[RMDB]
RNA sequence: GGGAACGACUCGAGUAGAGUCGAAAAGCAUAACAUUGUUGAAGAGCAAACACAUUUAGCUUCCUCAGCAACCAAACUCGCUAUAGAUUUACAAAAUCAAGAGUACACACUCUUAUCUAGUGUGCUACGACACCGCAUAUUUCGAUAUGCGGUGUCGAAAAGAAACAACAACAACAAC
Reactivity to DMS in 0.01 (KOAc 150mM, MgCl2 10mM, bicine 150mM(pH8.5), 24C), signal-to-noise 1, nucleotides 027 to 126: g020c050a080u010a120a140c180a170u000u000g020u000u000g010a010a070g000a020g000c020a070a160a020c120a110c180a080u000u000u000a130g010c050u000u000c010c020u000c080a050g030c010a110a040c070c070a030a090a160c140u000c100g010c100u000a120u000a070g000a050u000u000u000a040c300a080a040a030a040u000c050a110a050g000a070g010u000a050c060a020c040a040c020u000c050u000u020a130u000c080u010a040g020u000g000u000g000c120u000a010
Reactivity to 2A3 in 0.01 (KOAc 150mM, MgCl2 10mM, bicine 150mM(pH8.5), 24C), signal-to-noise 2, nucleotides 027 to 126: g000c020a020u060a180a040c010a040u040u050g060u030u030g030a010a030g020a010g100c040a030a200a030c090a040c050a190u110u130u140a030g000c040u080u080c010c050u000c000a030g000c000a010a010c000c060a070a030a040c010u070c070g000c090u050a050u070a230g010a060u070u020u110a070c080a070a150a030a020u100c050a080a010g030a010g130u100a030c040a000c030a040c010u020c010u180u120a070u040c050u000a040g000u000g000u000g050c060u090a080